The record gives the reactivity of an RNA of 177 nucleotides to 2A3 and DMS. For DMS the reverse transcriptase was MarathonRT. It was measured as part of the RMDB library RFMREP.
[RMDB]
RNA sequence: GGGAACGACUCGAGUAGAGUCGAAAAGAAGGCUUAAAGCGCUUUUUCGUGGAGGCCACACGCCCACUUGCAAUGGCCAUUAUGUUUUUGGGCUAUAAAGUGCAGCUCUGACAAAAGCGUUUGCUUAUCCUUAGUACAACUUCGGUUGUACUAAGGAAAAAGAAACAACAACAACAAC
Reactivity to 2A3 in 0.01 (KOAc 150mM, MgCl2 10mM, bicine 150mM(pH8.5), 24C), signal-to-noise 2, nucleotides 027 to 126: g040a030a010g070g010c060u180u200a210a030a000g000c010g040c010u020u030u000u000u020c060g020u020g000g050a030g020g090c000c000a010c000a000c010g040c000c000c000a010c020u040u110g000c040a090a120u050g060g010c040c040a070u150u130a160u100g030u000u030u010u110u040g000g000g000c030u040a030u110a210a150a090g100u110g040c030a030g020c020u010c030u040g070a020c030a020a040a010a000g010c030g040u030u030u060g010c000u010u080a030
Reactivity to DMS in 0.01 (KOAc 150mM, MgCl2 10mM, bicine 150mM(pH8.5), 24C), signal-to-noise 3, nucleotides 027 to 126: g000a120a060g000g020c040u000u020a090a070a110g010c090g030c020u000u000u000u010u000c070g040u020g010g000a080g020g000c050c020a090c060a050c150g000c040c030c010a060c060u000u010g000c110a080a060u000g010g010c050c040a150u010u000a090u010g000u010u010u000u000u000g010g020g010c010u010a200u010a040a070a100g010u000g010c130a100g010c020u000c020u000g000a060c120a010a050a050a060g000c070g000u000u000u000g000c000u000u000a150